The record gives the reactivity of an RNA of 207 nucleotides to 2A3 and DMS. The data come from the RNA Mapping Database (RMDB), library OK3TST.
RNA sequence: GGGAACGACUCGAGUAGAGUCGAAAAUACAUCAUUGCUCUUGGAAUUCCAGGAGCCAGUGGUGGAGGAGAUAAGAAGCCUCGUUACAACACGACUACGAGGCGGGGUAGUACAGCACAGCGUGACGGUUAUUACGGUGUACCAACCAAUGAUGCUGCGCAGCCUAAUAGUUCGCUAUUAGGCUGCGAAAAGAAACAACAACAACAAC
Reactivity to 2A3 in 0.01 (KOAc 150mM, MgCl2 10mM, bicine 150mM(pH8.5), 24C), signal-to-noise 3, nucleotides 027 to 156: u110a000c010a010u010c000a000u020u020g000c000u020c010u010u060g050g150a300a220u300u220c000c000a000g000g010a000g000c010c000a030g000u010g000g000u050g000g030a040g020g060a080g010a080u160a100a150g090a160a000g000c000c000u000c000g000u020u040a050c020a300a070c080a050c210g200a090c060u050a020c010g010a000g000g000c030g010g000g000g020u080a110g040u070a030c010a010g000c010a000c010a050g010c020g090u050g040a060c060g050g020u040u070a070u050u150a080c120g030g000u060g000u040a060c000c030a040a000c030c010a010a020u100g020a060u060g000c000u000g010
Reactivity to DMS in 0.01 (KOAc 150mM, MgCl2 10mM, bicine 150mM(pH8.5), 24C), signal-to-noise 2, nucleotides 027 to 156: u000a040c000a020u000c000a020u000u000g000c000u010c000u040u030g000g000a300a230u000u000c010c020a020g000g000a020g030c020c040a000g020u010g060g080u000g030g000a170g000g010a140g020a150u000a170a050g000a170a250g010c000c000u000c010g020u020u000a060c070a100a180c100a160c120g010a180c120u000a090c020g000a000g010g060c000g000g040g030g010u000a050g030u000a050c070a100g000c020a100c010a120g010c000g010u000g040a070c000g040g000u000u000a190u000u000a130c000g030g000u010g040u010a120c020c050a080a170c010c010a100a100u000g010a100u000g000c080u010g030

For 2A3, 1,442 sequencing reads were counted.
As a SHAPE reagent, 2A3 marks flexible, mostly unpaired nucleotides at the ribose 2'-OH.
2A3 adducts were read by reverse transcription with SuperScript II with manganese.
For DMS, 1,921 sequencing reads were counted.